[RMDB]
RNA sequence: GGGAACGACUCGAGUAGAGUCGAAAACACUCGCCGCUUAAACACCGGUGAGCCUUGCAACAGCAGGCCGAUGGGCUGGGCAAGGGGGUCGCAAGACCUCCCGGCUGCAAGGUAAUUUACAUCGGCUGGUUCUGCGUCGGGCACCUUGGCGCAGGAUACACUCCUUUUGGUUCGCCAAAAGGAGUGUAAAAGAAACAACAACAACAAC
Reactivity to 2A3 in 0.01 (KOAc 150mM, MgCl2 10mM, bicine 150mM(pH8.5), 24C), signal-to-noise 1, nucleotides 027 to 156: c040a050c000u000c000g000c000c000g000c020u030u060a040a080a030c030a000c000c020g010g000u000g000a000g010c010c010u010u020g000c040a110a080c000a050g000c000a020g050g040c010c000g010a010u010g000g000g000c010u020g010g030g000c040a080a070g000g010g000g010g010u010c000g020c100a140a000g000a030c000c000u050c000c000c010g040g010c010u040g000c000a000a000g000g010u030a010a060u080u210u110a020c000a000u000c000g020g000c010u020g080g000u040u010c000u020g000c010g010u010c050g010g100g030c170a150c050c060u020u150g000g000c000g000c010a000g000g000a000u030